[RMDB]
RNA sequence: GGGAACGACUCGAGUAGAGUCGAAAAGUAAACUAAGCACCAAGAACUGCCUCGUAUCCAUCUCGAUUAGGCACUGAUAGACCCUUGAGCCUUCGUCCAGGAGGAUAGUGUCCGCGUCGGGCUCCGAUCUAGUCGAUCUAUUCGUAGAUCGACUAGAAAAAGAAACAACAACAACAAC
Reactivity to 2A3 in 0.01 (KOAc 150mM, MgCl2 10mM, bicine 150mM(pH8.5), 24C), signal-to-noise 6, nucleotides 027 to 126: g080u110a040a080a050c080u080a110a020g070c020a040c040c010a060a030g070a110a060c020u070g020c010c000u040c040g030u060a070u040c030c010a050u020c040u020c040g060a060u070u120a060g030g010c030a020c020u020g020a060u050a100g090a070c000c000c000u020u080g070a030g040c010c010u050u070c040g060u050c060c030a040g020g030a020g040g000a050u050a060g080u060g010u020c000c020g040c020g050u030c030g020g030g000c020u010c010c010g010a010
Reactivity to DMS in 0.01 (KOAc 150mM, MgCl2 10mM, bicine 150mM(pH8.5), 24C), signal-to-noise 4, nucleotides 027 to 126: g040u010a070a100a080c040u000a100a090g000c040a090c050c040a090a090g000a100a080c070u010g000c010c000u000c040g010u020a050u000c020c010a060u010c030u000c080g000a100u010u020a120g000g010c020a030c040u020g010a100u020a080g010a120c030c010c020u010u000g020a120g000c010c010u000u020c030g020u010c060c060a110g000g000a080g000g000a050u010a020g010u010g030u010c000c050g010c110g030u000c020g010g000g010c060u010c010c050g020a180